[RMDB]
RNA sequence: GGGAACGACUCGAGUAGAGUCGAAAAGAUAUGGACUAAACAUGUGGAACUACCGAUAAUCUCGGAAACGAGAUUAUUCGGCCGAAUUUAGUCCUAAGUCAAAGUAGAAUUCUUCGGAAUUCUACAACCUAGAAUAGUACUUCGGUACUAUUCUAGGAAAAGAAACAACAACAACAAC
Reactivity to 2A3 in 0.01 (KOAc 150mM, MgCl2 10mM, bicine 150mM(pH8.5), 24C), signal-to-noise 5, nucleotides 027 to 126: g000a010u020a010u050g000g000a000c010u020a000a020a020c090a120u250g100u300g180g060a220a240c130u140a080c260c010g010a000u010a010a010u000c000u000c000g010g000a000a010a000c000g010a000g000a010u010u000a030u070u140c020g000g030c020c000g020a010a030u000u010u010a010g010u010c000c000u000a030a000g000u000c040a200a080a060g000u000a010g010a020a010u010u000c000u030u060c300g110g010a010a010u010u010c000u000a000c010a000a040
Reactivity to DMS in 0.01 (KOAc 150mM, MgCl2 10mM, bicine 150mM(pH8.5), 24C), signal-to-noise 4, nucleotides 027 to 126: g010a010u000a100u000g000g000a010c000u000a010a000a010c300a120u010g050u010g060g010a190a100c190u020a300c010c000g010a020u000a000a000u010c000u000c000g010g010a040a030a040c000g000a010g010a000u000u000a000u010u010c010g010g000c030c010g010a110a120u000u000u000a000g000u000c000c000u000a010a100g010u000c020a070a110a140g000u010a000g000a010a010u000u000c010u000u000c210g020g010a010a010u000u000c000u000a020c000a050a070

Structure probing data (2A3 and DMS) for a 177-nucleotide construct. For DMS, 3,789 sequencing reads were counted. The data come from the RNA Mapping Database (RMDB), library TTRDEL. Reactivities are given for positions 27 through 126. DMS adducts were read by reverse transcription with MarathonRT.